Notes
Structure probing data (2A3 and DMS) for a 177-nucleotide construct. The data come from the RNA Mapping Database (RMDB), library RFMREP. The DMS profile rests on 2,260 reads. For 2A3 the reverse transcriptase was SuperScript II with manganese.
RNA sequence: GGGAACGACUCGAGUAGAGUCGAAAAGGUAUGUCUCAUUAUAAUGACACUACCUUCUUAAAUGGACAAAUUGCGUCUAGCAAUAAUGAGAUUGAGCAAUAACAGGUCUGUGAUGCCCUUAGAUGCACGGAUAGUGUAACUUCGGUUACACUAUCCGAAAAGAAACAACAACAACAAC
Reactivity to 2A3 in 0.01 (KOAc 150mM, MgCl2 10mM, bicine 150mM(pH8.5), 24C), signal-to-noise 4, nucleotides 027 to 126: g000g000u040a020u110g020u010c000u000c040a080u120u250a120u090a300a180u140g010a000c000a010c050u030a000c010c000u020u010c010u000u130a110a080a040u070g030g000a000c010a020a090a020u040u020g010c020g050u020c080u070a050g030c020a070a140u180a140a140u180g050a060g000a100u040u140g050a030g000c010a020a040u020a100a020c030a070g060g080u000c020u030g040u020g010a030u100g010c000c000c000u000u030a130g020a060u110g110c050a020
Reactivity to DMS in 0.01 (KOAc 150mM, MgCl2 10mM, bicine 150mM(pH8.5), 24C), signal-to-noise 3, nucleotides 027 to 126: g020g020u000a010u010g000u000c070u000c120a080u000u020a140u010a140a100u030g010a040c050a030c140u000a020c010c030u000u010c070u000u010a040a150a040u010g010g020a020c080a040a110a050u020u000g020c010g010u000c080u010a070g010c090a100a080u000a070a110u020g000a070g020a070u000u000g020a170g020c020a020a020u000a100a090c220a120g000g000u010c050u010g010u010g010a100u000g000c020c030c010u000u010a090g000a110u000g020c130a120